[RMDB]
RNA sequence: GGGAACGACUCGAGUAGAGUCGAAAACAGAGCGGCAACGGAGUUGGUGCGCGCUCGGGAGCCGCAGCUGCCGGUCGAGGGUCCCAUUCAAUACGACGCCGCAGUGGAACCGUCGGUCGCGGCCACCUCAGCCUACUAGGUUCGCCUAGUAGGCUGAAAAAGAAACAACAACAACAAC
Reactivity to 2A3 in 0.01 (KOAc 150mM, MgCl2 10mM, bicine 150mM(pH8.5), 24C), signal-to-noise 4, nucleotides 027 to 126: c030a010g070a010g030c010g000g030c020a050a040c060g210g010a080g050u100u120g100g040u110g030c090g000c000g020c030u010c010g020g000g000a010g010c000c000g000c010a000g010c000u010g050c070c020g010g010u010c000g000a050g020g000g040u040c020c000c000a000u060u070c040a060a100u120a220c090g020a010c010g140c040c040g000c050a040g030u070g030g020a020a030c000c040g170u010c040g010g010u030c030g000c000g020g000c040c000a060c000c020
Reactivity to DMS in 0.01 (KOAc 150mM, MgCl2 10mM, bicine 150mM(pH8.5), 24C), signal-to-noise 2, nucleotides 027 to 126: c110a130g000a030g020c040g000g040c040a080a270c030g000g030a070g000u000u030g020g020u020g010c040g020c060g020c030u010c000g000g000g000a300g030c000c000g000c010a070g000c010u050g040c120c010g000g000u040c020g010a040g010g000g010u000c000c010c020a150u010u060c120a100a190u060a060c110g010a080c070g000c000c010g000c030a000g030u050g000g050a120a030c010c000g030u000c040g000g000u000c030g040c000g010g020c010c040a050c030c060